[RMDB]
RNA sequence: GGGAACGACUCGAGUAGAGUCGAAAAGAUAUGGAGCAAGCAACAGCGUAUGGGUCGGAAACGACCUUUACGACAUGCUUUCUCCUAAGUCAAAAGUACGGGUGUAUCUUCGGAUACACCCGUACAACAUCAGAUUACUGUUCGCAGUAAUCUGAUGAAAAGAAACAACAACAACAAC
Reactivity to 2A3 in 0.01 (KOAc 150mM, MgCl2 10mM, bicine 150mM(pH8.5), 24C), signal-to-noise 3, nucleotides 027 to 126: g010a000u020a010u070g000g010a000g010c000a010a000g000c010a010a130c090a300g220c040g000u010a000u010g020g000g000u000c000g010g000a020a010a010c000g000a000c000c030u000u000u000a010c010g200a140c000a010u020g000c000u010u010u000c000u000c000c010u000a010a010g010u010c010a060a020a080a200g010u010a000c000g000g030g000u060g010u060a010u010c030u070u170c300g070g010a000u000a000c010a000c000c000c000g000u000a000c000a000a000
Reactivity to DMS in 0.01 (KOAc 150mM, MgCl2 10mM, bicine 150mM(pH8.5), 24C), signal-to-noise 8, nucleotides 027 to 126: g010a010u000a120u010g000g010a010g010c120a010a000g010c000a020a100c300a100g020c020g020u000a000u000g000g000g010u000c000g020g000a020a030a060c000g010a010c000c000u000u000u000a000c000g010a250c050a190u000g000c000u000u000u000c000u000c000c000u000a000a070g000u000c010a090a080a130a130g010u000a000c010g010g000g010u000g010u000a000u000c000u000u010c210g020g000a000u000a000c000a000c000c000c000g000u000a000c000a070a160